[RMDB]
RNA sequence: GGGAACGACUCGAGUAGAGUCGAAAAGGAAAGACCAGUCCAUCUAGACCCCUUGAGAGGUUUUCAGCUUCUGUCUUUUAUGAGUGACCCAAGGGAUUUCCCAAGAGUUAUUCUGGUCACAUAAAACCGUAUACUCUCUCUUCGGAGAGAGUAUACGAAAAGAAACAACAACAACAAC
Reactivity to 2A3 in 0.01 (KOAc 150mM, MgCl2 10mM, bicine 150mM(pH8.5), 24C), signal-to-noise 2, nucleotides 027 to 126: g000g020a040a130a020g000a000c000c030a000g000u040c050c030a060u000c010u050a050g070a090c010c000c070c000u000u020g090a150g040a050g220g100u090u030u130u110c020a090g000c020u090u040c010u150g150u130c040u000u300u060u140a190u260g070a070g030u080g050a000c010c000c020a000a000g030g000g000a030u030u050u050c000c020c010a030a030g040a030g140u170u140a090u260u070c020u000g000g040u070c010a000c000a020u300a050a090a000a000c000
Reactivity to DMS in 0.01 (KOAc 150mM, MgCl2 10mM, bicine 150mM(pH8.5), 24C), signal-to-noise 2, nucleotides 027 to 126: g000g000a070a090a100g010a000c010c020a050g020u010c030c040a180u020c070u000a150g000a140c100c000c000c030u010u010g000a100g000a070g020g000u000u000u010u010c190a160g000c020u010u000c030u000g000u000c110u000u010u010u010a080u020g020a130g000u010g000a060c070c140c010a000a080g000g000g000a150u000u010u000c000c000c020a070a110g020a120g010u010u010a120u000u000c030u010g000g000u000c020a170c210a080u000a060a050a050a070c260

The record gives the reactivity of an RNA of 177 nucleotides to 2A3 and DMS. For 2A3 the reverse transcriptase was SuperScript II with manganese. The data come from the RNA Mapping Database (RMDB), library OK2TST. The RNA was probed in 150 mM KOAc, 10 mM MgCl2 and 150 mM bicine (pH 8.5) at 24 C.